[RMDB]
RNA sequence: GGGAACGACUCGAGUAGAGUCGAAAACGCGCGGCAUGUCUAUCCGCAGGUGCCGCCGAAGGUCGAAUACGAACUGACGCCGUUCGGCAAGACGCUCGCCCCGGUGCUGAUCAGCCUGCGGGAGUGAAAUUUUACCUAUGUUCGCAUAGGUAAAAUUAAAAGAAACAACAACAACAAC
Reactivity to 2A3 in 0.01 (KOAc 150mM, MgCl2 10mM, bicine 150mM(pH8.5), 24C), signal-to-noise 5, nucleotides 027 to 126: c020g070c010g000c010g040g000c030a050u090g060u060c040u080a220u040c010c000g000c000a000g000g020u050g030c030c030g000c000c000g050a050a020g030g020u090c030g040a050a040u180a200c070g040a120a040c080u090g070a050c050g030c060c020g090u070u050c010g010g000c010a010a050g040a020c040g000c050u020c030g030c010c000c000c010g040g020u060g000c040u040g020a200u080c040a030g010c010c000u010g000c030g000g030g000a020g000u090g060a080
Reactivity to DMS in 0.01 (KOAc 150mM, MgCl2 10mM, bicine 150mM(pH8.5), 24C), signal-to-noise 8, nucleotides 027 to 126: c080g000c130g030c030g000g010c040a120u010g010u000c040u000a110u000c010c010g020c010a020g000g010u000g020c050c050g010c010c020g000a080a080g000g020u000c010g000a120a090u010a130c090g000a080a070c080u000g010a190c230g000c040c060g010u010u000c050g010g000c030a100a100g010a150c110g000c030u000c060g000c030c010c020c040g000g010u000g000c040u000g000a100u010c090a190g010c010c010u000g000c010g000g000g000a060g000u010g000a060
This 177-nucleotide RNA was probed chemically with 2A3 and DMS. High DMS reactivity at an A or C suggests that its Watson-Crick edge is free. The reactions ran in a buffer of 150 mM KOAc, 10 mM MgCl2 and 150 mM bicine (pH 8.5), at 24 C. The 2A3 profile rests on 9,183 reads. Reactivities are rounded to 0.1 and cut off at 0 and 3.